[RMDB]
RNA sequence: GGGAACGACUCGAGUAGAGUCGAAAAGUUGGGGACGCAUGGCCGAGUUUAUCUUCACCAGACUCGAAUGCAUGCUCAAGUACAUAACAGACCACUAUGGCGUCGAACCAAUUCGGUUGAGUACUACUAAUCCGGAGUGAUUCGUCACUCCGGAUUAAAAAGAAACAACAACAACAAC
Reactivity to DMS in 0.01 (KOAc 150mM, MgCl2 10mM, bicine 150mM(pH8.5), 24C), signal-to-noise 2, nucleotides 027 to 126: g030u000u020g020g010g000g010a100c100g040c020a020u000g010g020c080c020g000a040g030u000u000u000a100u000c170u000u010c190a070c140c060a070g010a010c060u000c000g020a060a050u010g010c020a040u000g020c010u010c040a060a090g000u000a040c080a070u020a050a050c100a270g030a040c050c020a060c090u000a070u000g000g010c090g020u020c150g030a070a130c000c010a080a120u020u000c080g020g010u000u000g000a090g040u000a030c050u000a130c210
Structure probing data (DMS) for a 177-nucleotide construct. The reactions ran in a buffer of 150 mM KOAc, 10 mM MgCl2 and 150 mM bicine (pH 8.5), at 24 C. Source: RMDB library OK2TRN, as collected in RNAgym.